[RMDB]
RNA sequence: GGGAACGACUCGAGUAGAGUCGAAAAGGAUGGUCAUAAUUUUUCUCCUGGUAGGAGUGAAGCUGAGCUCUGUCUUCCCAAGUCAUUUUCUGUAGCCUCUGCUUGAUCUGAGUCCUCAGGACAGAGUUCAGAUGCCUUUCAGUUAAGGCUGUCCACCAGAUGACUGCAUAUUCGUAUGCAGUCAUCUAAAAGAAACAACAACAACAAC
Reactivity to 2A3 in 0.01 (KOAc 150mM, MgCl2 10mM, bicine 150mM(pH8.5), 24C), signal-to-noise 3, nucleotides 027 to 156: g030g000a030u030g000g030u010c030a030u080a290a100u100u100u040u150u070c050u050c020c000u100g130g060u140a040g010g020a020g030u090g120a110a000g050c000u010g000a010g000c000u000c010u000g000u000c000u040u020c030c030c010a010a010g070u060c050a070u060u100u130u080c050u050g100u110a020g020c020c020u070c030u040g030c070u090u140g020a110u120c020u040g010a020g060u040c020c020u040c060a010g010g010a000c000a000g000a000g000u020u010c000a010g000a000u050g020c000c010u030u050u080c020a060g030u070u090a130a020g000g020c000u010g010u030c000c010a020c010c020
Reactivity to DMS in 0.01 (KOAc 150mM, MgCl2 10mM, bicine 150mM(pH8.5), 24C), signal-to-noise 1, nucleotides 027 to 156: g020g040a050u000g010g000u000c030a150u000a020a070u000u000u000u000u000c000u010c030c010u000g030g000u000a180g020g000a070g050u000g000a040a050g010c030u000g010a090g020c010u000c000u010g000u000c010u000u000c010c010c030a080a110g000u040c030a090u000u000u000u000c030u010g030u000a150g020c120c040u000c020u000g000c080u000u000g000a040u000c030u000g010a170g020u010c060c030u000c070a110g020g010a040c010a030g010a060g000u000u000c000a030g020a040u010g000c030c030u010u000u000c030a240g000u010u000a020a040g030g020c010u010g010u000c020c000a070c080c010
Chemical mapping of a 207-nucleotide RNA with 2A3 and DMS. The RNA was probed in 150 mM KOAc, 10 mM MgCl2 and 150 mM bicine (pH 8.5) at 24 C. For 2A3 the reverse transcriptase was SuperScript II with manganese. For DMS the reverse transcriptase was MarathonRT. The 2A3 profile rests on 1,770 reads.